[RMDB]
RNA sequence: GGGAACGACUCGAGUAGAGUCGAAAAUCUACUUGUCUAUUGAUCUGCAUCUCGAUAAGUCCGUUUGUCAGGGUGACCACAGUAAGUAAUCAUGAAAGUAAUCAUGAUCUGAUGUUACUUUUAUGUAGUUUUAAAUAGGGUUCGCCCUAUUUAAAACAAAAGAAACAACAACAACAAC
Reactivity to DMS in 0.01 (KOAc 150mM, MgCl2 10mM, bicine 150mM(pH8.5), 24C), signal-to-noise 4, nucleotides 027 to 126: u010c040u000a040c040u010u010g010u010c030u000a110u030u010g010a050u000c060u010g000c060a030u010c030u000c060g010a070u020a080a090g000u010c060c050g000u010u000u000g000u020c060a090g010g000g020u010g000a060c050c080a070c110a080g010u010a040a080g030u000a090a050u000c020a010u000g000a000a010a030g000u000a020a020u040c020a020u020g000a140u070c140u040g000a030u000g000u000u010a010c010u010u000u000u000a020u010g000u010a060
Reactivity to 2A3 in 0.01 (KOAc 150mM, MgCl2 10mM, bicine 150mM(pH8.5), 24C), signal-to-noise 6, nucleotides 027 to 126: u030c010u040a070c030u060u090g070u030c040u060a140u070u160g050a080u040c020u010g030c020a020u030c020u030c030g070a070u060a120a060g050u030c010c030g030u000u050u070g090u030c060a040g000g050g000u020g030a020c000c020a040c020a050g030u090a110a000g030u040a070a090u080c000a000u010g010a010a010a010g060u070a020a040u100c030a020u090g100a110u070c050u120g070a050u040g020u050u010a000c000u000u010u010u020a020u030g060u040a060
The record gives the reactivity of an RNA of 177 nucleotides to DMS and 2A3. The RNA was probed in 150 mM KOAc, 10 mM MgCl2 and 150 mM bicine (pH 8.5) at 24 C.